[RMDB]
RNA sequence: GGGAACGACUCGAGUAGAGUCGAAAAUUUUGAAGUGCCUUUGCAUGGUGGAUAAAGAAUAUUCAUAGAGGUUUCAAUUGAAAAAUGCUGCAUGUAAUUACCACUGAAAGUAAGGACAAGUGAGUGAUACAAUGUUUUGUUUCGACAAAACAUUGUAAAAAGAAACAACAACAACAAC
Reactivity to DMS in 0.01 (KOAc 150mM, MgCl2 10mM, bicine 150mM(pH8.5), 24C), signal-to-noise 5, nucleotides 027 to 126: u010u000u010u000g010a060a080g010u010g020c030c030u000u010u000g010c100a080u010g010g040u000g000g000a050u000a060a120a190g000a130a120u010a030u000u000c020a060u010a110g000a060g010g010u000u000u000c020a030a080u000u000g000a030a050a070a100a080u010g010c040u000g010c060a040u010g000u000a030a040u000u000a050c040c030a070c090u010g000a090a070a090g010u000a020a020g010g020a040c070a050a070g010u000g010a080g010u010g000a220
Reactivity to 2A3 in 0.01 (KOAc 150mM, MgCl2 10mM, bicine 150mM(pH8.5), 24C), signal-to-noise 2, nucleotides 027 to 126: u110u080u040u100g040a040a010g030u010g090c010c000u000u060u080g030c050a090u120g050g000u010g040g040a050u070a120a230a050g090a170a100u070a040u080u040c010a030u070a110g060a050g100g010u060u070u050c040a080a070u080u190g100a080a100a030a000a000u070g030c020u000g020c010a020u030g010u080a060a040u030u050a030c010c010a040c030u040g070a180a030a000g020u040a030a010g010g010a010c010a070a020g040u090g130a070g020u070g020a030